[RMDB]
RNA sequence: GGGAACGACUCGAGUAGAGUCGAAAAUUUUCGGUUUGGACGGUGGCGUCGGUACGCAAGAGGAGAACACUGAGAGACACACCACUGAAGAUGUGUCCACCGACAUGCACACUCUGCUAGGUGUGCGGUGCUAAACACGUUUCGACGUGUUUAGCACAAAAGAAACAACAACAACAAC
Reactivity to DMS in 0.01 (KOAc 150mM, MgCl2 10mM, bicine 150mM(pH8.5), 24C), signal-to-noise 3, nucleotides 027 to 126: u000u000u010u010c050g010g020u010u000u010g000g000a100c110g020g030u000g000g000c100g010u020c040g010g010u000a040c140g010c090a190a130g000a140g000g000a100g000a110a090c060a090c060u030g010a090g030a130g010a080c030a000c000a040c020c010a180c100u040g000a120a070g040a100u010g010u000g000u040c020c050a060c050c080g000a110c170a120u040g000c030a020c000a000c030u030c060u030g020c150u000a120g000g020u000g010u000g000c000g000
Reactivity to 2A3 in 0.01 (KOAc 150mM, MgCl2 10mM, bicine 150mM(pH8.5), 24C), signal-to-noise 4, nucleotides 027 to 126: u070u030u020u060c050g010g040u080u110u140g060g040a030c020g000g070u070g030g010c010g030u030c010g040g040u080a050c020g030c080a080a050g040a030g130g080a080g050a070a000c080a020c080u120g010a040g010a000g010a090c020a000c000a000c010c030a090c060u100g100a130a060g060a270u070g020u010g000u060c000c010a050c040c000g030a040c010a030u080g000c000a000c000a000c000u060c020u040g180c100u150a050g000g010u000g000u000g000c040g030

Record summary
This 177-nucleotide RNA was probed chemically with DMS and 2A3. The data come from the RNA Mapping Database (RMDB), library OK1LIB. Values cover nucleotides 27 to 126. The reactions ran in a buffer of 150 mM KOAc, 10 mM MgCl2 and 150 mM bicine (pH 8.5), at 24 C. The DMS profile rests on 3,808 reads. DMS (dimethyl sulfate) methylates the pairing face of unpaired adenines and cytosines. For 2A3, 3,054 sequencing reads were counted.